[RMDB]
RNA sequence: GGGAACGACUCGAGUAGAGUCGAAAAGAUAUGGACAGGCGAAGAACUACUUGACGCAGAUAUCGGAAACGAUGUAGUCAGAGUAGGGAGCCUGUCCUAAGUCAAAACACGUACUUCGGUACGUGAACACUGAUCUACACUUCGGUGUAGAUCAGUGAAAAGAAACAACAACAACAAC
Reactivity to 2A3 in 0.01 (KOAc 150mM, MgCl2 10mM, bicine 150mM(pH8.5), 24C), signal-to-noise 4, nucleotides 027 to 126: g010a020u070a030u130g010g000a010c000a000g000g000c010g180a300a020g010a120a080c000u000a010c010u010u000g020a000c010g020c140a060g030a300u150a020u140c010g030g040a050a050a020c010g020a000u030g000u080a110g000u020c020a030g020a000g300u000a000g030g020g000a020g000c000c000u000g000u000c000c000u010a000a000g000u000c010a000a010a030a100c000a000c010g000u010a000c010u050u080c250g090g000u000a010c000g000u010g010a010a030
Reactivity to DMS in 0.01 (KOAc 150mM, MgCl2 10mM, bicine 150mM(pH8.5), 24C), signal-to-noise 4, nucleotides 027 to 126: g000a050u010a300u010g000g000a010c000a000g020g030c000g000a120a130g010a180a140c000u000a000c000u000u000g010a030c000g030c200a100g000a050u000a020u000c000g010g000a080a080a180c000g010a010u000g020u000a080g000u000c010a020g000a020g000u000a010g000g030g000a200g010c010c000u000g000u000c000c000u000a010a030g000u010c010a060a040a120a270c010a000c000g020u010a020c000u010u010c210g010g020u000a000c000g010u010g010a090a130

Chemical mapping of a 177-nucleotide RNA with 2A3 and DMS.
For DMS the reverse transcriptase was MarathonRT.
The RNA was probed in 150 mM KOAc, 10 mM MgCl2 and 150 mM bicine (pH 8.5) at 24 C.
2A3 adducts were read by reverse transcription with SuperScript II with manganese.
It was measured as part of the RMDB library TTRDEL.